[RMDB]
RNA sequence: GGGAACGACUCGAGUAGAGUCGAAAAGUGGGUCAUGAAACAGUUCAGGGCAUGUCGAGCACCAGUACGCUCGUAAAACCACUGGAAACAAUACAAACGCCAACGACGAGCGUUUCGCUCUCGCCGCUUAAGCGGUGAGCCGCUGCACUGAUCUGUCCCUUACUUAGAGCUUCGGCUCUAAGUAAGGAAAAGAAACAACAACAACAAC
Reactivity to 2A3 in 0.01 (KOAc 150mM, MgCl2 10mM, bicine 150mM(pH8.5), 24C), signal-to-noise 6, nucleotides 027 to 156: g060u050g010g050g030u070c070a110u160g140a070a050a070c020a010g000u030u030c010a010g010g010g020c030a040u100g110u270c020g010a030g020c050a040c060c010a010g040u030a010c010g010c000u000c010g050u050a030a030a030a070c010c020a010c010u010g020g000a030a070a010c060a030a040u240a090c080a060a070a010c070g040c040c020a040a050c110g120a020c030g020a030g000c000g000u020u060u070c050g010c010u010c000u020c000g000c020c000g040c040u300u300a270a050g000c000g010g000u000g000a000g000c000c020g040c020u010g000c020a020c040u010g010a040u010c010u010g070u090c000
Reactivity to DMS in 0.01 (KOAc 150mM, MgCl2 10mM, bicine 150mM(pH8.5), 24C), signal-to-noise 1, nucleotides 027 to 156: g020u010g000g030g010u010c100a110u010g010a120a070a100c070a100g020u010u000c040a060g010g000g040c020a070u020g000u000c040g000a060g020c000a150c090c010a110g000u000a080c120g020c000u020c010g000u000a030a060a110a040c000c000a050c030u000g020g000a110a040a060c070a040a280u000a130c110a030a050a070c020g020c010c010a000a100c000g000a080c040g020a020g010c020g020u000u010u010c040g030c060u000c030u010c000g020c020c000g050c000u000u000a060a100g070c000g030g000u000g000a030g020c060c060g020c010u000g020c000a040c060u000g010a210u000c000u000g020u010c040